Chemical mapping of a 177-nucleotide RNA with 2A3 and DMS. For DMS, 1,079 sequencing reads were counted.
RNA sequence: GGGAACGACUCGAGUAGAGUCGAAAAUUAAAGGAGUGAAGGUACAAGCGACAGUGUCCAUCUGAGGUAAUCGACCACUGCCAGUACCAAGACGUGCGUAGUCAACUCAAAGGCAGAACGCAAAAAAACAGUAUAGACUCUUCGGAGUCUAUACUGUAAAAGAAACAACAACAACAAC
Reactivity to 2A3 in 0.01 (KOAc 150mM, MgCl2 10mM, bicine 150mM(pH8.5), 24C), signal-to-noise 1, nucleotides 027 to 126: u110u060a000a050a030g150g000a070g020u140g090a170a020g050g020u040a020c080a170a120g060c130g170a140c040a040g040u010g010u100c050c020a080u010c070u130g060a020g160g040u100a050a110u140c020g030a000c000c050a010c050u020g000c000c010a020g000u010a020c000c000a000a010g130a020c100g060u050g040c010g030u090a050g010u030c020a000a060c010u030c040a000a030a000g000g010c020a040g030a170a010c020g000c000a000a030a070a070a000a000
Reactivity to DMS in 0.01 (KOAc 150mM, MgCl2 10mM, bicine 150mM(pH8.5), 24C), signal-to-noise 2, nucleotides 027 to 126: u020u020a050a120a150g010g020a080g010u000g020a110a100g000g000u010a010c020a120a090g000c060g030a050c020a000g000u010g010u000c080c120a080u000c050u010g020a040g010g010u020a100a120u000c050g030a030c250c030a030c020u000g000c000c000a150g000u010a020c020c020a040a120g000a050c120g010u000g010c010g010u010a120g000u000c010a020a060c000u000c040a040a110a030g000g000c010a030g000a080a010c060g010c020a000a000a060a140a090a020
The RNA was probed in 150 mM KOAc, 10 mM MgCl2 and 150 mM bicine (pH 8.5) at 24 C. The data come from the RNA Mapping Database (RMDB), library M2PK90. For 2A3 the reverse transcriptase was SuperScript II with manganese. For 2A3, 773 sequencing reads were counted.